RNA sequence: GGGAACGACUCGAGUAGAGUCGAAAACGAGUGCAAUAAAGACGCGGUUGCCGAUCGGUAUGGAUGCCACCGUGACGGCUCAAUCACACAAGUGCCAACGCUAACGAGGCGCUCGCUAUUGCUGCGUAAAAGCGACGAUCGUUCGCGAUCGUCGCAAUCUGGUGUCCAAGUUCGCUUGGACACCAGAAAAAGAAACAACAACAACAAC
Reactivity to 2A3 in 0.01 (KOAc 150mM, MgCl2 10mM, bicine 150mM(pH8.5), 24C), signal-to-noise 1, nucleotides 027 to 156: c030g020a070g040u070g030c070a070a050u090a280a090a000g110a010c000g010c030g020g000u020u050g000c000c020g050a110u030c040g010g120u110a150u280g110g020a120u110g120c000c020a010c040c010g010u030g070a030c040g030g000c120u090c040a060a150u170c040a020c000a030c000a140a140g090u010g080c000c010a100a010c030g010c050u060a110a040c030g070a070g120g000c010g000c010u000c030g020c020u020a020u120u120g070c050u000g030c010g020u030a000a040a010a110g000c000g000a000c000g000a000u000c010g000u090u070c260g040c040g050a000u000c000g010u000c000g010c000a000a000